[RMDB]
RNA sequence: GGGAACGACUCGAGUAGAGUCGAAAAGAUAUGGAAAGGAACUACAAGCCGACAGCCGUUGAAAUCGGAAACGAUGGAGGCUGGGGCUUGCCUUUCCUAAGUCAAAAGUCGUGCUUCGGCACGACAAGAACACGAAUGAGUUCGCUCAUUCGUGUUCAAAAGAAACAACAACAACAAC
Reactivity to 2A3 in 0.01 (KOAc 150mM, MgCl2 10mM, bicine 150mM(pH8.5), 24C), signal-to-noise 2, nucleotides 027 to 126: g010a020u100a040u110g000g010a000a010a010g000g000a030a020c040u180a040c300a010a010g000c000c050g300a300c020a010g000c000c010g190u270u010g010a020a030a000u020c010g030g000a050a030a030c010g010a010u010g010g020a010g030g000c010u000g000g010g000g000c000u000u000g000c000c000u000u000u000c000c000u000a120a020g060u000c040a040a000a020a150g020u010c000g010u010g010c000u060u090c230g110g000c000a000c000g000a010c000a000a020
Reactivity to DMS in 0.01 (KOAc 150mM, MgCl2 10mM, bicine 150mM(pH8.5), 24C), signal-to-noise 2, nucleotides 027 to 126: g020a070u010a300u000g000g020a010a030a000g000g000a170a030c060u000a300c000a010a020g040c000c000g000a180c000a010g020c000c010g010u000u010g000a070a100a020u000c000g010g010a090a060a150c010g020a000u000g000g000a090g020g030c010u010g000g000g000g000c000u000u000g000c010c010u000u000u000c010c000u000a020a080g020u000c010a070a070a100a100g000u000c000g040u010g000c000u000u000c230g000g020c000a010c020g000a000c000a010a090
Structure probing data (2A3 and DMS) for a 177-nucleotide construct. 2A3 adducts were read by reverse transcription with SuperScript II with manganese. For DMS the reverse transcriptase was MarathonRT. The reactions ran in a buffer of 150 mM KOAc, 10 mM MgCl2 and 150 mM bicine (pH 8.5), at 24 C. For 2A3, 5,490 sequencing reads were counted. It was measured as part of the RMDB library TTRDEL.